Structure probing data (2A3 and DMS) for a 177-nucleotide construct.
For 2A3, 1,305 sequencing reads were counted.
For 2A3 the reverse transcriptase was SuperScript II with manganese.
DMS adducts were read by reverse transcription with MarathonRT.
RNA sequence: GGGAACGACUCGAGUAGAGUCGAAAAAAGAUCUCGCCGUUGGCGAACUCCCGCGCGUCCUGAGAGGUGACGUGGACGUCGAGCUCUUUGGCUACCUGCUCGGCCAGCUCCGGAUGGGCGCGGCCGGGACCGUGUCGAUGUUCGCAUCGACACGGUCAAAAGAAACAACAACAACAAC
Reactivity to 2A3 in 0.01 (KOAc 150mM, MgCl2 10mM, bicine 150mM(pH8.5), 24C), signal-to-noise 1, nucleotides 027 to 126: a000a000g060a050u040c000u000c050g000c010c000g300u080u150g070g030c010g030a060a070c060u040c030c010c000g030c030g000c050g060u020c010c040u080g060a070g000a040g070g070u090g000a150c150g130u080g080g090a010c020g000u010c010g000a000g000c020u100c000u170u090u080g060g000c040u070a150c010c010u060g030c000u010c040g000g000c020c010a040g000c010u010c020c000g130g040a080u140g120g010g030c040g000c040g020g090c000c000g050g030
Reactivity to DMS in 0.01 (KOAc 150mM, MgCl2 10mM, bicine 150mM(pH8.5), 24C), signal-to-noise 1, nucleotides 027 to 126: a020a040g000a040u000c070u010c010g010c040c010g010u000u000g020g050c010g000a020a070c040u000c000c020c000g000c040g010c020g050u000c010c000u000g000a300g000a110g000g010u000g010a060c060g020u010g030g000a090c100g010u000c020g010a020g000c030u010c070u010u000u000g000g000c060u020a060c050c070u000g000c030u000c000g010g020c000c030a070g010c000u000c010c000g000g010a210u000g000g000g000c030g000c050g000g010c090c000g010g000